This 177-nucleotide RNA was probed chemically with 2A3 and DMS. For DMS, 2,772 sequencing reads were counted. The RNA was probed in 150 mM KOAc, 10 mM MgCl2 and 150 mM bicine (pH 8.5) at 24 C. For DMS the reverse transcriptase was MarathonRT.
[RMDB]
RNA sequence: GGGAACGACUCGAGUAGAGUCGAAAAUUACUUGCUUGUGCUAGCAUUAGACUCGAGGUGCACAGGGUGAAUGGUGGGACAGGAGCAACCAUUGGGACUAAGAUUGCAAGCCGGAAGAGGUUAUGUGUCGGAUACUUCAUUUCGAUGAAGUAUCCGAAAAAGAAACAACAACAACAAC
Reactivity to 2A3 in 0.01 (KOAc 150mM, MgCl2 10mM, bicine 150mM(pH8.5), 24C), signal-to-noise 2, nucleotides 027 to 126: u050u000a030c020u010u060g070c000u090u080g070u100g090c050u040a010g030c000a060u160u000a030g020a100c010u000c070g070a030g020g000u050g000c030a020c050a040g070g000g000u010g000a120a120u100g020g000u080g030g000g000a040c040a080g000g090a040g030c020a050a000c000c020a060u040u070g020g000g000a020c000u040a040a010g010a090u030u120g020c010a010a000g040c010c010g090g040a060a010g050a010g010g040u110u030a080u180g060u020g070
Reactivity to DMS in 0.01 (KOAc 150mM, MgCl2 10mM, bicine 150mM(pH8.5), 24C), signal-to-noise 3, nucleotides 027 to 126: u010u000a070c090u000u020g010c020u000u010g000u010g050c040u000a090g020c050a060u000u000a090g030a080c040u000c060g030a050g000g030u010g010c040a050c070a070g020g000g020u000g020a080a040u010g010g030u000g000g000g010a110c120a060g010g000a100g010c040a050a070c060c050a110u010u000g000g010g000a070c070u000a050a120g010a100u000u000g020c030a060a060g020c030c040g000g000a090a080g010a110g010g000u000u000a060u010g020u000g010